RNA sequence: GGGAACGACUCGAGUAGAGUCGAAAAGAAUGGUUCAUUGAAAGCAGAACUCAGGCCUAUAGAGAAAAUUCAAGAGAACAAGACGAGAUCAUUUACAGCAGCGCCAAUAGACACUUUAUUGGCCGGAGAUGUGAGACUAAUUCGUUAGUCUCACAUCAAAAGAAACAACAACAACAAC
Reactivity to 2A3 in 0.01 (KOAc 150mM, MgCl2 10mM, bicine 150mM(pH8.5), 24C), signal-to-noise 6, nucleotides 027 to 126: g140a040a090u190g040g000u060u030c040a040u080u100g080a060a040a030g100c060a020g050a080a040c010u020c060a050g010g060c020c010u100a090u120a070g080a010g070a050a100a090a010u120u090c040a060a010g070a010g020a130a030c050a060a050g090a040c080g030a020g030a090u060c040a090u070u120u200a110c080a030g070c020a010g010c030g000c070c000a010a020u010a030g090a040c040a010c190u090u070u020a010u000u010g000g000c000c030g030g020a130
Reactivity to DMS in 0.01 (KOAc 150mM, MgCl2 10mM, bicine 150mM(pH8.5), 24C), signal-to-noise 5, nucleotides 027 to 126: g010a080a100u010g010g000u020u000c020a040u040u010g010a110a080a080g010c090a060g010a080a050c030u020c040a090g000g020c030c040u010a100u030a070g010a100g010a080a070a080a110u020u000c030a050a110g020a120g000a040a060c070a080a070g010a070c110g000a090g000a030u010c020a050u000u020u000a050c150a110g030c050a080g000c110g000c000c040a040a030u010a000g000a150c270a070c160u010u010u000a030u030u000g000g030c000c040g030g010a110
This 177-nucleotide RNA was probed chemically with 2A3 and DMS. The RNA was probed in 150 mM KOAc, 10 mM MgCl2 and 150 mM bicine (pH 8.5) at 24 C.